[RMDB]
RNA sequence: GGGAACGACUCGAGUAGAGUCGAAAAUCAUUGGCUUCGCUGCGCGCUGCGUUGCCUAGGCUUCAGAUGCUUCGUACUGUUGCCAACGUUGCAAUAUCCAAACGCUAAUGCGAAAGUGUGCAAACAAUAGAAUUUUUAAAUUCGUUUAAAAAUUCUAAAAAGAAACAACAACAACAAC
Reactivity to DMS in 0.01 (KOAc 150mM, MgCl2 10mM, bicine 150mM(pH8.5), 24C), signal-to-noise 3, nucleotides 027 to 126: u010c050a080u000u010g000g000c050u010u010c020g030c050u000g020c150g020c040g020c030u000g010c110g020u010u000g010c010c020u000a150g000g010c020u000u000c020a040g000a130u020g020c100u000u010c100g000u000a130c040u020g000u010u000g010c000c020a120a130c190g010u000u010g020c050a050a080u000a070u010c070c070a110a060a080c060g010c020u000a070a120u010g010c030g000a060a040a040g000u000g000u000g010c010a090a100a100c160a030a120
Reactivity to 2A3 in 0.01 (KOAc 150mM, MgCl2 10mM, bicine 150mM(pH8.5), 24C), signal-to-noise 2, nucleotides 027 to 126: u080c030a010u050u120g020g000c020u030u020c030g000c030u080g000c030g000c010g010c020u000g020c010g000u010u020g000c000c000u010a060g000g000c000u010u030c000a020g050a190u110g040c040u110u190c060g020u040a090c000u010g020u050u030g000c000c010a050a020c060g090u110u080g000c020a040a040u030a050u150c030c020a050a050a020c010g000c020u110a160a050u190g000c040g070a020a020a040g020u020g000u020g000c030a060a110a120c020a050a080
Chemical mapping of a 177-nucleotide RNA with DMS and 2A3. The 2A3 profile rests on 1,894 reads. The RNA was probed in 150 mM KOAc, 10 mM MgCl2 and 150 mM bicine (pH 8.5) at 24 C. For DMS, 1,705 sequencing reads were counted. Reactivities are given for positions 27 through 126.